Source: RMDB library OK3TST, as collected in RNAgym. Chemical mapping of a 207-nucleotide RNA with 2A3. Values are in units of 0.01, from 0 to 300, in steps of 10.

[RMDB]
RNA sequence: GGGAACGACUCGAGUAGAGUCGAAAACUUUGGGCAAAAUUUCUCAAUCUUUCUCUCUGAAUCAGAAUUUCUGAGAGCGGAGGCCAGGAUUUAUACUUGCAGCAAGUUACAUAAAUUAUUUUGCGGCCAGCAGCUUGGUACUAUCCACAGAUUGGAGAGUUGUUACUUGUUUCGACAAGUAACAACUAAAAGAAACAACAACAACAAC
Reactivity to 2A3 in 0.01 (KOAc 150mM, MgCl2 10mM, bicine 150mM(pH8.5), 24C), signal-to-noise 1, nucleotides 027 to 156: c000u050u050u130g020g060g000c030a020a040a150a290u010u180u070c000u000c000a030a050u030c000u050u090u050c010u000c010u010c030u000g030a050a010u110c090a190g170a300a240u090u070u000c050u080g000a000g000a000g020c070g010g100a020g020g010c020c020a030g000g000a000u000u170u050a230u080a060c000u020u000g000c000a020g000c010a070a000g010u090u100a080c010a050u290a180a180a070u230u210a150u100u250u040u060g030c010g010g000c070c010a000g010c000a000g010c000u000u030g000g000u020a160c050u070a070u070c010c000a030c000a130g030a100u030u060g050g020a080g000